[RMDB]
RNA sequence: GGGAACGACUCGAGUAGAGUCGAAAAGGCACUCUAGGACACCCAUUGAAGGCAACUAGUUCUCGGCAUAUCUGAUUCACAGAUGUGAACUAAAUGUUGCUGUUUAGUGUCCUUCAAUGGGAGUGCAGCAGAGGAGAGUAUUCGUACUCUCCUCUGCAAAAGAAACAACAACAACAAC
Reactivity to DMS in 0.01 (KOAc 150mM, MgCl2 10mM, bicine 150mM(pH8.5), 24C), signal-to-noise 2, nucleotides 027 to 126: g010g010c000a020c000u010c040u000a140g020g010a130c200a170c030c010c010a020u000u000g020a020a020g010g000c070a060a030c000u000a040g010u000u000c060u000c040g030g000c020a020u010a010u010c030u010g020a090u000u000c040a030c010a220g010a100u000g030u000g000a010a010c020u000a000a020a010u000g010u000u000g000c020u000g020u000u000u000a000g010u000g000u000c000c000u000u000c010a000a010u000g010g010g000a030g000u000g010c000a150
Reactivity to 2A3 in 0.01 (KOAc 150mM, MgCl2 10mM, bicine 150mM(pH8.5), 24C), signal-to-noise 2, nucleotides 027 to 126: g040g000c020a000c030u080c110u220a110g090g050a050c020a020c040c000c000a030u000u000g000a000a000g000g000c010a080a040c040u010a020g130u230u060c060u020c000g000g000c010a020u040a070u000c020u030g080a300u020u050c030a010c020a080g300a300u260g130u010g010a000a010c000u020a040a030a080u070g010u020u040g020c050u020g030u010u040u020a000g000u000g040u100c000c000u000u010c000a000a000u010g000g000g010a010g000u000g020c020a020

Chemical mapping of a 177-nucleotide RNA with DMS and 2A3. 2A3 adducts were read by reverse transcription with SuperScript II with manganese. Conditions: 150 mM KOAc, 10 mM MgCl2 and 150 mM bicine (pH 8.5), 24 C. It was measured as part of the RMDB library OK2TRN. For 2A3, 1,786 sequencing reads were counted. In probing experiments dimethyl sulfate is read out at A N1 and C N3, which are open when not base-paired.